[RMDB]
RNA sequence: GGGAACGACUCGAGUAGAGUCGAAAACAUAGCGUUUCACAAUGUGCGCCAUUAACAUUGUUUAUGCAUGCACGUUUCGCAAUGUACGGCGCAGAAACAUUGCCAACACAAAUACGCUUCACGAUGUAAAACAUCGGUGCGUUCGCGCACCGAUGAAGUUGAAGAUGUACUUCGGUACAUCUUCAACAAAAGAAACAACAACAACAAC
Reactivity to 2A3 in 0.01 (KOAc 150mM, MgCl2 10mM, bicine 150mM(pH8.5), 24C), signal-to-noise 7, nucleotides 027 to 156: c030a060u120a010g000c010g000u020u110u130c150a060c010a030a020u030g010u020g020c000g000c000c030a060u140u160a060a000c010a020u000u010g060u010u100u130a090u130g050c070a020u130g060c090a050c170g030u040u110u100c050g010c000a000a010u010g000u010a040c060g000g000c000g030c010a010g030a000a090a000c000a000u000u030g030c040c060a120a020c060a050c030a150a110a010u130a030c020g040c000u100u150c110a090c130g090a070u080g040u290a010a040a050a060c000a010u000c000g000g000u000g000c000g000u010u010c120g030c000g000c030a000c010c010g000a000u000g000a020a010
Reactivity to DMS in 0.01 (KOAc 150mM, MgCl2 10mM, bicine 150mM(pH8.5), 24C), signal-to-noise 2, nucleotides 027 to 156: c060a050u000a050g010c020g040u030u000u000c090a070c030a040a080u000g010u020g020c000g020c020c000a130u000u010a110a070c000a020u010u010g010u000u000u010a050u000g020c050a150u000g040c120a080c070g020u000u000u000c260g040c030a030a020u000g020u000a080c050g020g010c050g030c030a100g000a100a100a100c030a020u000u010g000c000c020a090a080c100a080c070a060a040a080u000a050c030g000c020u000u010c070a060c040g030a100u000g010u000a020a090a080a170c010a020u000c000g000g010u000g040c020g040u010u010c190g030c050g040c020a000c010c000g020a010u000g000a020a070

Structure probing data (2A3 and DMS) for a 207-nucleotide construct. It was measured as part of the RMDB library M2RFPK. The reactions ran in a buffer of 150 mM KOAc, 10 mM MgCl2 and 150 mM bicine (pH 8.5), at 24 C. The 2A3 profile rests on 6,094 reads.